[RMDB]
RNA sequence: GGGAACGACUCGAGUAGAGUCGAAAAAAACGUGCAACCGCACGGAGAUGGAAUGCUUCGGACAUUGGGGCAAGGUCCGCAUUUACGAAAACUACAUUAUCAAGCCAGAGUACAUCAACGAAGUUAUCCGCAUUCUGAACCACAUCUGCGUAAACUGUCGUCUUACCCUGUUCGCAGGGUAAGACGAAAAAGAAACAACAACAACAAC
Reactivity to 2A3 in 0.01 (KOAc 150mM, MgCl2 10mM, bicine 150mM(pH8.5), 24C), signal-to-noise 1, nucleotides 027 to 156: a000a020a020c080g000u080g030c100a180a070c160c050g060c020a030c050g050g000a080g000a030u240g000g040a040a020u030g070c060u110u270c080g000g000a000c000a010u030u160g000g000g000g010c000a010a010g020g000u000c000c020g040c080a040u090u090u050a090c130g210a010a060a110a080c080u210a010c020a170u070u100a220u300c040a040a000g000c040c000a000g000a000g050u020a040c000a090u020c020a060a000c050g030a050a000g000u040u180a050u090c000c020g060c010a000u110u080c030u050g000a110a070c000c110a000c020a110u110c090u170g030c000g020u000a000a040a140c020u070g080
An RNA of 207 nucleotides, treated with 2A3 and read out base by base. For 2A3, 405 sequencing reads were counted. Reactivities are given for positions 27 through 156. It was measured as part of the RMDB library OK3TST. The reactions ran in a buffer of 150 mM KOAc, 10 mM MgCl2 and 150 mM bicine (pH 8.5), at 24 C.